[RMDB]
RNA sequence: GGGAACGACUCGAGUAGAGUCGAAAAGGGCUAGUCCUCAGCCUCGGGCAAUCUAGUCAUCUCUAAAUGCUAAAGACUUCAGAAUGUAUUCUAACACCUGUGAUACUGGGCAUACUUGAGGUUGGGGCUUAGGCCCCUACCAGCCCAGCCCCCAGUGCAUGACGUGUUCUUUCGAGAACACGUCAUGAAAAGAAACAACAACAACAAC
Reactivity to 2A3 in 0.01 (KOAc 150mM, MgCl2 10mM, bicine 150mM(pH8.5), 24C), signal-to-noise 1, nucleotides 027 to 156: g000g010g010c010u020a000g030u060c010c030u070c080a020g020c010c030u090c060g010g030g000c040a070a030u040c050u030a010g030u050c010a050u010c010u020c000u010a000a000a000u020g000c010u090a230a060a030g040a080c010u010u000c010a000g000a010a010u020g020u020a050u200u150c040u120a040a010c000a000c000c010u070g040u070g110a050u090a150c000u010g000g020g010c020a070u110a210c140u060u260g120a050g030g030u040u040g010g000g000g000c030u030u050a100g000g050c000c000c000c000u010a010c000c000a000g020c000c000c000a000g000c000c010c000c000c030a020g030u060g040
An RNA of 207 nucleotides, treated with 2A3 and read out base by base. Conditions: 150 mM KOAc, 10 mM MgCl2 and 150 mM bicine (pH 8.5), 24 C.